[RMDB]
Source: RMDB library OK2TST, as collected in RNAgym. This 177-nucleotide RNA was probed chemically with 2A3 and DMS.
RNA sequence: GGGAACGACUCGAGUAGAGUCGAAAACAGUAUUAAGCUGGAAGGAGAGGAACUGUUCCUCUACAACGAAGACUCGUUGCUUGGUGUUAUCCAGAAUUGAAGGGUGGACAGUAACCGCUAACGUGCAAUUACUUUUAUCGUUCGCGAUAAAAGUAAUAAAAGAAACAACAACAACAAC
Reactivity to 2A3 in 0.01 (KOAc 150mM, MgCl2 10mM, bicine 150mM(pH8.5), 24C), signal-to-noise 4, nucleotides 027 to 126: c030a030g080u110a140u270u220a160a040g010c020u040g030g060a080a050g080g030a040g010a020g020g000a020a020c030u070g050u080u020c000c010u000c000u020a030c010a030a010c010g040a080a050g170a190c080u020c040g020u020u060g030c050u050u110g030g010u090g060u220u060a070u070c010c000a010g080a080a110u150u150g070a100a040g050g020g020u140g020g020a010c000a040g020u010a040a050c000c010g000c030u040a060a030c050g070u090g020c020a030
Reactivity to DMS in 0.01 (KOAc 150mM, MgCl2 10mM, bicine 150mM(pH8.5), 24C), signal-to-noise 9, nucleotides 027 to 126: c020a050g010u010a120u010u010a090a140g020c010u000g010g010a120a190g000g010a040g010a030g000g000a140a120c090u010g000u000u000c010c000u000c010u000a130c020a030a040c030g010a070a150g010a120c190u010c020g010u000u000g010c110u000u000g010g010u000g010u010u010a070u010c020c020a050g000a120a090u010u000g010a100a070g000g000g020u000g000g000a020c020a040g010u000a050a090c040c020g000c050u000a050a110c100g010u010g020c120a100

2A3 adducts were read by reverse transcription with SuperScript II with manganese. The RNA was probed in 150 mM KOAc, 10 mM MgCl2 and 150 mM bicine (pH 8.5) at 24 C.